[RMDB]
RNA sequence: GGGAACGACUCGAGUAGAGUCGAAAACGAACCGCCUACACCUUUGGGUGAAAAGGGCUUUACCGGGCGCAUCUUCUCCCUCACCCGAAGUGGGAGCGCCGGGGCUGGAAUUGCCGUUUUGGAGCCACAUUACUGAGGGUUUCGACCCUCAGUAAUGAAAAGAAACAACAACAACAAC
Reactivity to 2A3 in 0.01 (KOAc 150mM, MgCl2 10mM, bicine 150mM(pH8.5), 24C), signal-to-noise 2, nucleotides 027 to 126: c010g040a030a010c070c000g030c020c020u060a030c010a040c020c000u030u090u220g150g000g010u000g050a070a040a030a010g030g010g020c000u090u080u070a080c020c020g050g040g000c030g000c020a080u100c040u260u040c020u040c000c000c000u020c020a070c030c040c020g040a120a020g050u070g010g040g020a040g000c000g000c010c030g000g000g010g000c040u070g030g080a180a140u120u110g020c030c000g010u040u000u030u130g050g020a050g040c010c020a040
Reactivity to DMS in 0.01 (KOAc 150mM, MgCl2 10mM, bicine 150mM(pH8.5), 24C), signal-to-noise 3, nucleotides 027 to 126: c100g010a100a130c080c080g000c020c010u010a180c040a030c030c010u000u000u020g030g000g020u010g000a040a050a060a060g000g010g030c080u000u010u010a100c060c030g020g010g030c020g040c030a050u010c060u000u010c080u000c010c000c030u000c120a070c090c110c140g000a050a090g010u010g000g000g000a060g010c070g020c040c020g010g010g020g030c060u000g010g010a090a070u000u010g010c030c030g000u000u000u000u010g010g020a110g020c060c050a170
Chemical mapping of a 177-nucleotide RNA with 2A3 and DMS. The 2A3 profile rests on 1,930 reads. DMS adducts were read by reverse transcription with MarathonRT. 2A3 adducts were read by reverse transcription with SuperScript II with manganese. It was measured as part of the RMDB library OK2TST. 2A3 is a SHAPE reagent: it acylates the 2'-hydroxyl of flexible nucleotides of all four kinds.